[RMDB]
RNA sequence: GGGAACGACUCGAGUAGAGUCGAAAAACUAUACCGACGUGACAUCUCAAGACUAAGCAUCUGUGAUCUGAUUGAACUACUGCUCGAACGAAAAUGGGACAUUAUUGACUCGGCAUUCAGAGACGUCAUUCCGACACUCCCAACUAAACCACACCAGCUUCUUAAAGCCUUUCGAGGCUUUAAGAAGAAAAGAAACAACAACAACAAC
Reactivity to 2A3 in 0.01 (KOAc 150mM, MgCl2 10mM, bicine 150mM(pH8.5), 24C), signal-to-noise 4, nucleotides 027 to 156: a010c100u110a090u120a180c030c020g080a080c070g060u040g050a020c010a060u050c060u030c100a110a070g020a060c020u080a090a040g010c010a060u040c030u060g050u040g030a050u050c030u030g020a090u070u080g030a060a030c030u100a050c020u070g040c000u000c050g080a080a070c030g040a030a020a040a080u090g020g030g030a010c030a060u070u140a070u140u150g010a020c030u020c040g010g020c050a050u080u110c050a030g020a000g020a070c040g020u010c020a020u140u040c030c020g020a000c010a020c030u020c000c010c000a030a020c010u090a050a060a060c030c050a030c010a030c140c020a010g000
Reactivity to DMS in 0.01 (KOAc 150mM, MgCl2 10mM, bicine 150mM(pH8.5), 24C), signal-to-noise 1, nucleotides 027 to 156: a000c020u010a070u000a130c000c020g030a090c070g110u010g000a100c060a070u000c010u010c050a060a110g010a070c040u000a020a130g000c060a070u010c090u040g040u010g020a070u000c020u010g000a130u000u000g020a040a040c010u000a070c010u010g010c020u010c000g020a060a190c070g010a040a030a030a060u020g010g050g040a040c020a060u000u000a100u020u010g000a080c000u020c030g020g060c060a140u000u000c040a120g010a020g020a040c040g020u000c010a120u000u000c020c010g010a090c060a020c040u010c000c000c000a030a160c050u000a050a070a020c030c030a010c020a090c060c010a080g000
An RNA of 207 nucleotides, treated with 2A3 and DMS and read out base by base. The RNA was probed in 150 mM KOAc, 10 mM MgCl2 and 150 mM bicine (pH 8.5) at 24 C. DMS (dimethyl sulfate) methylates the pairing face of unpaired adenines and cytosines. It was measured as part of the RMDB library OK3TST.